[RMDB]
Chemical mapping of a 207-nucleotide RNA with 2A3. The reactions ran in a buffer of 150 mM KOAc, 10 mM MgCl2 and 150 mM bicine (pH 8.5), at 24 C.
RNA sequence: GGGAACGACUCGAGUAGAGUCGAAAAGAGCCACAUACCUACCCAAGGUGAAAGCUCCUUCUCUCGCAAUGUGUAACUCAUGAUUCUCAUGACCCCUGGUUGGAGAGAUCCGGACUAGCAGCCAGGGAAAGCCGCUGCCGAUUCGUCGGCAGCGGAAGAUGGUAUUCCUCUUCGGAGGAAUACCAUCAAAAGAAACAACAACAACAAC
Reactivity to 2A3 in 0.01 (KOAc 150mM, MgCl2 10mM, bicine 150mM(pH8.5), 24C), signal-to-noise 1, nucleotides 027 to 156: g010a000g010c010c040a080c050a080u120a040c020c030u010a050c020c030c050a030a030g030g000u070g060a220a140a100g060c050u060c000c000u090u040c010u000c010u000c000g000c100a070a070u130g020u030g030u140a110a080c010u010c020a050u090g060a150u190u020c090u010c020a030u120g050a090c000c000c000c000u000g010g010u010u000g060g010a030g000a000g010a080u050c080c040g050g070a030c010u030a010g040c010a000g000c010c000a000g000g010g030a070a020a000g030c000c000g010c000u000g010c010c000g040a040u040u060c120g060u000c000g150g040c000a000g010c000g000g000a000a000

Source information
Values cover nucleotides 27 to 156. The 2A3 profile rests on 729 reads. Values are in units of 0.01, from 0 to 300, in steps of 10.